Background
An RNA of 177 nucleotides, treated with DMS and 2A3 and read out base by base.
RNA sequence: GGGAACGACUCGAGUAGAGUCGAAAAGGGUAGCAGCGAUAGACGACGAAACGUACCCCGCCAUUUAAGUCGUCGAUGAUCAGCGAGGUACGAGCUGAUGAUAGGCGGAUUGCUGCUUUUUACCCAAGGGUGCAUGCUUCUUCGGGGGCGUGCACCCAAAAGAAACAACAACAACAAC
Reactivity to DMS in 0.01 (KOAc 150mM, MgCl2 10mM, bicine 150mM(pH8.5), 24C), signal-to-noise 9, nucleotides 027 to 126: g000g000g020u010a010g010c000a010g010c030g010a030u020a080g010a050c000g010a020c000g010a060a100a110c240g000u030a120c140c110c010c010g010c030c020a100u020u020u040a080a120g010u000c000g010u000c010g000a040u010g000a010u000c010a010g000c000g010a150g010g000u040a080c130g000a200g000c010u010g000a000u000g000a050u010a080g000g010c030g000g000a240u010u010g010c000u000g000c000u000u010u020u010u020a090c000c010c000a120a150
Reactivity to 2A3 in 0.01 (KOAc 150mM, MgCl2 10mM, bicine 150mM(pH8.5), 24C), signal-to-noise 9, nucleotides 027 to 126: g020g000g020u020a000g000c010a000g010c010g030a030u050a050g020a010c010g000a000c010g070a110a100a040c120g080u180a150c060c040c000c000g010c010c010a100u150u150u140a070a020g010u010c000g000u010c010g010a030u050g020a010u010c010a000g010c010g040a070g040g120u190a100c100g020a050g010c000u000g000a010u010g020a030u040a050g020g000c000g000g010a000u010u040g000c000u000g000c000u050u030u010u050u050a040c010c000c000a020a050
It was measured as part of the RMDB library OK1LIB.